[RMDB]
RNA sequence: GGGAACGACUCGAGUAGAGUCGAAAAGAAGAGAAAGGAGACACAAGGACAGUCUCCAGAGGUUCCUAAGGACUCGAUCGCGCCUGCCGGGAAUCAUGGACGCCCGGUUGUCCAUGAAAGAAGAAGAAGCUACUGGUAGGUUCGCCUACCAGUAGCUAAAAGAAACAACAACAACAAC
Reactivity to DMS in 0.01 (KOAc 150mM, MgCl2 10mM, bicine 150mM(pH8.5), 24C), signal-to-noise 1, nucleotides 027 to 126: g030a100a060g000a160g000a140a140a030g000g000a000g010a000c000a110c170a090a080g050g010a130c100a080g000u000c000u020c000c040a020g000a080g000g000u000u020c040c000u000a060a070g000g010a060c040u000c010g000a010u000c040g000c090g000c000c030u000g000c050c000g000g000g010a010a130u000c000a000u030g000g050a040c040g000c010c080c000g000g000u000u000g000u000c010c010a000u000g010a060a020a160g020a130a100g000a140a100g000a170
Reactivity to 2A3 in 0.01 (KOAc 150mM, MgCl2 10mM, bicine 150mM(pH8.5), 24C), signal-to-noise 1, nucleotides 027 to 126: g040a040a030g050a000g180a120a060a130g030g000a040g000a030c100a000c120a290a120g080g030a080c010a030g040u010c000u030c000c000a010g010a000g000g060u110u050c000c000u040a120a120g080g000a030c010u000c140g010a020u020c000g020c010g010c010c000u000g000c000c030g040g030g110a050a050u020c000a010u040g010g000a010c010g090c000c000c030g090g000u030u130g000u000c000c000a000u060g020a000a130a000g170a060a000g000a000a000g020a000